Record summary:
Structure probing data (2A3 and DMS) for a 177-nucleotide construct. For DMS, 28,220 sequencing reads were counted. For 2A3 the reverse transcriptase was SuperScript II with manganese. DMS adducts were read by reverse transcription with MarathonRT. The 2A3 profile rests on 25,138 reads.
RNA sequence: GGGAACGACUCGAGUAGAGUCGAAAAUGGACGUUGUUCGCAACGUCCACAUACUGAGUCGUACGUUAAACGUAUCGCGGGCAAAAGUGCAGUUAGAAUAAGUACCUAUUGAGUUCGCUCAAUAGAACAUAAGGUAAACUUUCGAGUUUACCUUAUGAAAAGAAACAACAACAACAAC
Reactivity to 2A3 in 0.01 (KOAc 150mM, MgCl2 10mM, bicine 150mM(pH8.5), 24C), signal-to-noise 9, nucleotides 027 to 126: u050g000g000a010c010g000u000u000g020u040u050c150g000c100a010a000c000g000u000c000c000a000c000a000u020a000c000u050g040a020g060u080c010g010u020a030c010g020u040u190a140a190a050c020g020u030a020u170c050g000c030g050g050g010c040a080a070a050a020g070u070g010c030a050g030u080u120a060g090a160a090u150a210a020g050u060a080c000c010u010a010u000u010g010a010g020u020u110c180g020c070u000c000a010a010u010a010g020a030a020
Reactivity to DMS in 0.01 (KOAc 150mM, MgCl2 10mM, bicine 150mM(pH8.5), 24C), signal-to-noise 9, nucleotides 027 to 126: u000g010g000a010c000g020u000u000g010u000u020c210g020c000a010a010c000g010u000c000c000a020c110a050u000a070c030u000g000a080g010u000c030g010u000a040c030g010u000u010a060a080a170c040g010u000a030u000c070g020c050g010g000g020c060a050a050a070a090g010u000g000c040a050g000u000u010a070g010a090a070u010a050a080g000u000a100c140c000u000a010u000u000g000a010g010u000u010c200g010c010u000c000a000a010u000a010g010a090a180